[RMDB]
RNA sequence: GGGAACGACUCGAGUAGAGUCGAAAAGAUAUGGAUUCAGGGAGCUUGGAUGUCGGAAACGACAUAGAGAGCGACGAUCUAAGAAUCCUAAGUCAAACGUUCGGACUAGUUCGCUAGUCCGAACGAAUCAUUUCCAUAGGUUCGCCUAUGGAAAUGAAAAAGAAACAACAACAACAAC
Reactivity to 2A3 in 0.01 (KOAc 150mM, MgCl2 10mM, bicine 150mM(pH8.5), 24C), signal-to-noise 3, nucleotides 027 to 126: g000a000u010a000u070g000g000a000u020u000c020a010g030g000g000a020g000c060u140u060g170g080a030u030g010u000c000g000g020a030a020a020c010g010a000c020a010u020a040g300a030g020a020g040c040g100a170c010g010a010u000c000u110a290a050g000a000a000u000c000c010u010a020a010g000u010c030a170a050a130c040g000u000u010c010g000g000a000c000u000a000g030u070u100c300g020c160u000a010g000u000c000c000g000a000a000c010g000a000a010
Reactivity to DMS in 0.01 (KOAc 150mM, MgCl2 10mM, bicine 150mM(pH8.5), 24C), signal-to-noise 4, nucleotides 027 to 126: g000a020u010a080u010g000g000a010u000u000c010a040g000g000g000a030g010c010u000u000g000g000a030u000g010u000c010g010g010a040a020a050c000g020a010c000a000u000a050g010a300g010a030g010c000g020a070c240g000a020u020c010u010a110a090g000a020a010u000c000c000u000a030a100g000u000c010a110a130a240c020g010u000u000c000g000g010a020c000u000a000g010u010u020c220g020c000u000a000g010u000c000c000g010a000a010c000g000a050a070